[RMDB]
The data come from the RNA Mapping Database (RMDB), library TTRDEL. Structure probing data (DMS) for a 177-nucleotide construct. Conditions: 150 mM KOAc, 10 mM MgCl2 and 150 mM bicine (pH 8.5), 24 C.

RNA sequence: GGGAACGACUCGAGUAGAGUCGAAAAGAUAUGGAGAUUCCAGCAAGCCUGUCGGAAACGACCAGGUGAUGACCUGGAUCUCCUAAGUCAAAAGUUAGGGUGUCAUGUUCGCAUGACACCCUAACAACAUUUGCUGUAGCUUCGGCUACAGCAAAUGAAAAGAAACAACAACAACAAC
Reactivity to DMS in 0.01 (KOAc 150mM, MgCl2 10mM, bicine 150mM(pH8.5), 24C), signal-to-noise 2, nucleotides 027 to 126: g020a020u000a300u010g010g020a000g010a030u000u000c010c000a010g010c040a090a250g030c000c000u010g000u010c000g000g010a120a100a260c010g020a040c250c160a000g020g040u000g000a080u020g000a100c300c000u000g010g000a020u000c000u000c000c000u000a000a030g030u000c030a090a080a150a120g030u000u000a000g000g000g000u000g000u010c000a020u000g010u000u020c180g020c000a000u000g000a010c010a010c010c000c000u010a000a000c000a110a100